[RMDB]
This 207-nucleotide RNA was probed chemically with 2A3 and DMS. For DMS the reverse transcriptase was MarathonRT. It was measured as part of the RMDB library ARCHII.

RNA sequence: GGGAACGACUCGAGUAGAGUCGAAAAGUAAAGGUCCUGGAUUUUAUCUAAAACAUAAUGACAGAUGUAAAUUAAAUCCAAAUAGAAUUCAAUUGAAUUGUCCAUAUUGUGAUAAGAAAGAUUUAUCACCAUCAACAUAUAAACGAUGGCACGGCGACUGAGAAAGAGUGUUCGCACUCUUUCUCAGAAAAGAAACAACAACAACAAC
Reactivity to 2A3 in 0.01 (KOAc 150mM, MgCl2 10mM, bicine 150mM(pH8.5), 24C), signal-to-noise 1, nucleotides 027 to 156: g020u020a120a170a000g000g000u020c000c000u000g060g030a020u030u010u000u020a050u100c040u000a030a020a030a000c010a000u170a040a020u040g060a030c000a010g020a010u010g060u150a040a030a080u070u030a040a050a000u060c000c000a000a000a000u000a010g020a010a010u030u020c000a010a020u010u020g020a050a080u160u050g100u050c050c000a030u060a030u150u090g010u020g030a020u010a010a030g140a150a070a000g070a030u100u100u030a060u070c000a000c020c000a000u040c030a060a120c010a050u150a070u160a240a170a000c020g030a010u010g000g000c020a010c060g060g020c010g010a030
Reactivity to DMS in 0.01 (KOAc 150mM, MgCl2 10mM, bicine 150mM(pH8.5), 24C), signal-to-noise 1, nucleotides 027 to 156: g030u000a120a160a030g000g000u030c000c000u000g020g020a080u010u000u000u000a010u030c030u000a050a050a060a020c000a010u000a020a050u000g010a040c010a100g000a100u000g020u010a030a060a090u010u010a000a150a020u030c020c000a010a020a020u000a030g000a010a020u000u010c000a020a000u000u000g000a100a160u000u000g000u000c020c030a070u000a150u000u010g000u010g000a060u000a000a100g000a100a100a210g020a290u000u010u010a030u010c080a040c010c020a070u020c020a080a110c070a150u000a130u010a140a070a300c100g000a030u000g010g000c050a120c040g010g040c010g040a150